[RMDB]
RNA sequence: GGGAACGACUCGAGUAGAGUCGAAAACCAGUAUUGCAGACUUAAAAACAAGCAUGUUUUCAAAUGGCGCUAUGAGCUGCCAAUGAUGUAUCACCAUCAUAUCUCAUUAUUCUUUGCUAAAUGUGAUUCGGGACAAAAGUUUCGACUUUUGUCCCGAAAAAGAAACAACAACAACAAC
Reactivity to 2A3 in 0.01 (KOAc 150mM, MgCl2 10mM, bicine 150mM(pH8.5), 24C), signal-to-noise 2, nucleotides 027 to 126: c010c000a030g040u090a030u060u230g000c100a000g020a090c160u100u160a150a000a000a000a000c070a050a000g150c040a030u070g050u020u040u010u060c090a050a040a000u130g010g000c000g000c000u000a050u300g060a030g060c070u040g000c040c020a000a000u000g000a010u000g020u030a140u090c000a010c060c000a000u010c000a040u040a060u070c120u000c040a030u030u100a160u170u000c100u040u090u110g030c020u010a130a090a090u110g000u010g030a030u010

Chemical mapping of a 177-nucleotide RNA with 2A3. It was measured as part of the RMDB library RFM100. The reactions ran in a buffer of 150 mM KOAc, 10 mM MgCl2 and 150 mM bicine (pH 8.5), at 24 C. 2A3 is a SHAPE reagent: it acylates the 2'-hydroxyl of flexible nucleotides of all four kinds. Reactivities are rounded to 0.1 and cut off at 0 and 3.